RNA sequence: GGGAACGACUCGAGUAGAGUCGAAAACGCGGGAAAGCGGAGCAGCAGCUCCGCCUGCCCAGCGGGAGACAGCUGGUGGGGGCGCACGACGCGUUCUGCGGCGCAGGCCUCUGUCAGGGCCGUGGCCGCAACUCGAAGGCUUCGGCCUUCGAGUUGCAAAAGAAACAACAACAACAAC
Reactivity to DMS in 0.01 (KOAc 150mM, MgCl2 10mM, bicine 150mM(pH8.5), 24C), signal-to-noise 2, nucleotides 027 to 126: c030g000c020g000g020g010a070a110a180g000c000g020g010a000g030c000a130g000c240a140g010c000u000c000c010g000c000c030u000g000c050c000c000a120g040c000g000g000g000a190g000a070c090a090g000c010u000g010g000u020g000g020g000g000g020c010g030c030a190c060g020a040c050g000c020g000u030u010c080u040g000c020g010g010c000g010c180a190g000g000c020c000u000c000u010g000u020c070a120g000g000g000c030c050g000u020g000g000c010c030
Reactivity to 2A3 in 0.01 (KOAc 150mM, MgCl2 10mM, bicine 150mM(pH8.5), 24C), signal-to-noise 2, nucleotides 027 to 126: c020g000c040g000g020g000a060a050a000g000c000g000g010a000g000c030a010g020c020a050g000c000u000c000c000g010c000c000u030g000c000c000c000a050g030c000g010g020g010a040g050a030c050a010g070c030u060g000g000u060g010g000g020g010g000c050g040c030a030c030g070a030c030g010c010g050u210u170c100u240g000c000g030g010c020g040c080a080g010g090c000c010u050c000u050g100u040c050a030g010g000g010c010c030g050u080g060g040c020c030
Chemical mapping of a 177-nucleotide RNA with DMS and 2A3. The data come from the RNA Mapping Database (RMDB), library OK1LIB. The reactions ran in a buffer of 150 mM KOAc, 10 mM MgCl2 and 150 mM bicine (pH 8.5), at 24 C.